Record summary
This 177-nucleotide RNA was probed chemically with 2A3 and DMS. For DMS, 1,406 sequencing reads were counted. The reactions ran in a buffer of 150 mM KOAc, 10 mM MgCl2 and 150 mM bicine (pH 8.5), at 24 C.
RNA sequence: GGGAACGACUCGAGUAGAGUCGAAAAGGAGUAAAUGUUCUACUGCGCGAGGGCAUAGGGCAGAUUCUCAAUAUUCCCUGGGCUCUGCUGUCCGAUGCCCUCACGCAGUACAAGAAUUUCCUCCUCGCUGAAUAUUCGUGUUCGCACGAAUAUUCAGAAAAGAAACAACAACAACAAC
Reactivity to 2A3 in 0.01 (KOAc 150mM, MgCl2 10mM, bicine 150mM(pH8.5), 24C), signal-to-noise 1, nucleotides 027 to 126: g020g000a000g010u030a020a010a000u060g010u300u300c010u000a010c000u010g000c010g010c010g020a010g030g010g000c030a010u040a050g060g000g000c000a000g010a030u180u000c010u010c000a000a050u130a160u170u100c030c010c010u010g040g010g000c030u080c070u130g070c000u010g040u020c010c000g000a000u010g000c000c000c000u010c000a000c000g000c000a000g000u000a010c010a040a020g170a020a020u000u000u010c020c010u000c000c000u020c030g030
Reactivity to DMS in 0.01 (KOAc 150mM, MgCl2 10mM, bicine 150mM(pH8.5), 24C), signal-to-noise 1, nucleotides 027 to 126: g000g020a060g030u000a000a020a020u010g000u000u000c240u000a010c010u000g000c010g020c020g000a030g050g010g020c010a010u000a070g010g000g000c020a010g010a120u010u000c000u000c020a040a140u000a220u000u010c030c030c010u000g000g000g020c300u010c060u000g020c000u000g010u000c000c030g020a030u030g000c010c010c000u010c010a000c020g000c000a000g000u010a010c090a100a090g000a100a070u000u000u000c070c000u000c000c000u000c180g020